[RMDB]
RNA sequence: GGGAACGACUCGAGUAGAGUCGAAAAAAGAUAUGGAUGCAAGACAUGUCCGAAAAGCACGUUGAAAGUGCCUCGGAAACGAGGCACUGGAGUGCUUAGUAGGACAACAGCUUGCAUCCUAAGUCAACAAGAUACACAGGUUCGCCUGUGUAUCUUGAAAAGAAACAACAACAACAAC
Reactivity to DMS in 0.01 (KOAc 150mM, MgCl2 10mM, bicine 150mM(pH8.5), 24C), signal-to-noise 4, nucleotides 027 to 126: a120a050g010a040u000a300u010g000g010a020u000g000c000a010a010g010a030c130a270u000g010u010c000c000g010a160a190a280a110g010c000a000c000g020u000u010g030a170a150a020g000u000g000c000c000u000c000g010g000a100a060a160c020g010a010g000g000c000a000c000u000g000g000a040g020u000g010c000u000u000a000g010u000a160g000g010a010c000a000a030c300a120g000c000u000u010g000c000a000u000c010c000u000a000a050g000u000c050a140a270
Reactivity to 2A3 in 0.01 (KOAc 150mM, MgCl2 10mM, bicine 150mM(pH8.5), 24C), signal-to-noise 2, nucleotides 027 to 126: a010a010g090a050u090a060u130g000g000a000u000g000c000a000a000g050a140c080a130u180g000u020c000c000g020a000a010a010a010g010c010a010c020g260u300u060g020a020a020a000g000u010g000c000c020u000c010g010g030a040a060a030c000g000a010g000g000c000a000c000u020g000g000a010g000u000g010c000u010u010a000g000u010a010g050g020a000c000a010a000c000a010g020c000u000u010g000c000a000u000c000c000u000a020a000g010u000c010a010a060

This 177-nucleotide RNA was probed chemically with DMS and 2A3.
For 2A3, 6,120 sequencing reads were counted.
2A3 adducts were read by reverse transcription with SuperScript II with manganese.
For DMS, 4,635 sequencing reads were counted.
The reactions ran in a buffer of 150 mM KOAc, 10 mM MgCl2 and 150 mM bicine (pH 8.5), at 24 C.